[RMDB]
RNA sequence: GGGAACGACUCGAGUAGAGUCGAAAAUGGACAGUAAAACGAAGUACAUGCGAAUGUAGUAGCCGUUUACUAUGAGACUAGGCAUUAUAAUUGAAUAUCAUAGUAUAAAUUGCCAUGAGAGUAGAAGCGUACGAAGGUGGUUCGCCACCUUCGUACGAAAAGAAACAACAACAACAAC
Reactivity to DMS in 0.01 (KOAc 150mM, MgCl2 10mM, bicine 150mM(pH8.5), 24C), signal-to-noise 2, nucleotides 027 to 126: u000g000g020a130c010a020g000u010a100a070a050a030c070g000a160a100g000u000a020c020a040u000g010c190g020a090a060u000g010u000a070g000u030a090g000c140c040g000u000u000u000a020c010u010a000u000g000a060g000a070c070u000a070g000g010c050a030u060u030a120u030a120a100u020u010g000a070a090u020a060u000c000a000u000a010g010u000a030u000a060a020a060u010u020g020c000c030a030u000g010a080g020a080g010u000a070g040a080a060g000
Reactivity to 2A3 in 0.01 (KOAc 150mM, MgCl2 10mM, bicine 150mM(pH8.5), 24C), signal-to-noise 2, nucleotides 027 to 126: u020g000g000a050c020a010g120u100a050a110a030a000c050g020a170a000g040u010a000c000a000u060g020c030g090a070a000u040g050u120a060g050u020a000g120c080c000g000u000u000u050a030c000u000a000u010g000a000g000a030c090u150a200g020g150c010a010u040u180a080u060a120a160u140u040g030a120a000u090a020u100c000a010u030a010g010u010a000u060a070a120a030u130u090g010c000c010a050u090g010a030g000a000g060u050a020g050a170a020g000
Source: RMDB libraries RFM100 and RFMREP, as collected in RNAgym. This 177-nucleotide RNA was probed chemically with DMS and 2A3. The reactions ran in a buffer of 150 mM KOAc, 10 mM MgCl2 and 150 mM bicine (pH 8.5), at 24 C. DMS adducts were read by reverse transcription with MarathonRT.